Conditions: 150 mM KOAc, 10 mM MgCl2 and 150 mM bicine (pH 8.5), 24 C. Structure probing data (DMS and 2A3) for a 170-nucleotide construct. The DMS profile rests on 4,432 reads.
RNA sequence: GGGAACGACUCGAGUAGAGUCGAAAAGAAGUUGUAAACAAGUACUUCGAAAUCUAUGACGGUGGUUGUCUUAAUGCUUCUGAAGUGGUUGUUAAUAAUUUAGACAAGAGUGCUGGCCAUCCUUUUACAAGAGCACCGUUCGCGGUGCUCAAAAGAAACAACAACAACAAC
Reactivity to DMS in 0.01 (KOAc 150mM, MgCl2 10mM, bicine 150mM(pH8.5), 24C), signal-to-noise 2, nucleotides 027 to 129: g000a000a110g010u060u000g020u020a120a010a080c080a000a080g000u040a070c000u020u010c050g030a040a090a150u000c050u080a100u030g020a170c080g020g010u130g090g010u030u030g010u070c050u000u000a120a070u020g010c040u090u000c030u110g050a000a130g010u050g020g030u020u000g000u030u010a000a000u010a050a060u010u010u010a090g030a170c140a040a010g030a110g030u180g030c050u060g000g000c000c000a050u070c030c000u080u160u060u000a120c240a010a130
Reactivity to 2A3 in 0.01 (KOAc 150mM, MgCl2 10mM, bicine 150mM(pH8.5), 24C), signal-to-noise 1, nucleotides 027 to 129: g070a020a000g040u080u080g070u260a000a020a000c130a000a090g150u000a050c000u000u000c000g010a050a060a000u140c040u080a130u160g010a030c040g110g030u020g020g050u050u060g000u130c000u000u050a000a000u200g040c000u000u060c000u280g030a040a040g000u060g020g030u000u000g000u000u000a000a000u040a000a010u010u020u070a010g000a060c000a020a020g000a000g030u000g020c030u000g050g020c000c020a010u030c000c000u010u160u150u030a090c030a110a000